Structure probing data (2A3) for a 177-nucleotide construct.
RNA sequence: GGGAACGACUCGAGUAGAGUCGAAAAUACUAAUUUCUGAAUUAGUCAUUGGUAAUUCAAUGCCAACCUCCACAGGGUGGACUAAGGUUGAGGUAUAGAAUCCUAUUCGCUCCUGGUAGGAGAAAUUAUUCGCUUCAACUUUCGAGUUGAAGCGAAUAAAAGAAACAACAACAACAAC
Reactivity to 2A3 in 0.01 (KOAc 150mM, MgCl2 10mM, bicine 150mM(pH8.5), 24C), signal-to-noise 2, nucleotides 027 to 126: u100a000c000u000a000a000u010u010u190c110u160g250a110a110u080u020a040g000u100c060a020u000u040g020g000u060a060a050u240u040c070a010a000u010g010c000c000a020a020c000c000u030c000c000a030c060a030g240g080g000u010g000g000a030c080u130a040a130g140g010u040u050g060a070g100g060u130a090u040a150g240a110a080u020c000c000u040a020u020u100c110g010c010u070c020c000u030g050g190u150a060g010g000a010g000a000a000a000u010u010
The RNA was probed in 150 mM KOAc, 10 mM MgCl2 and 150 mM bicine (pH 8.5) at 24 C.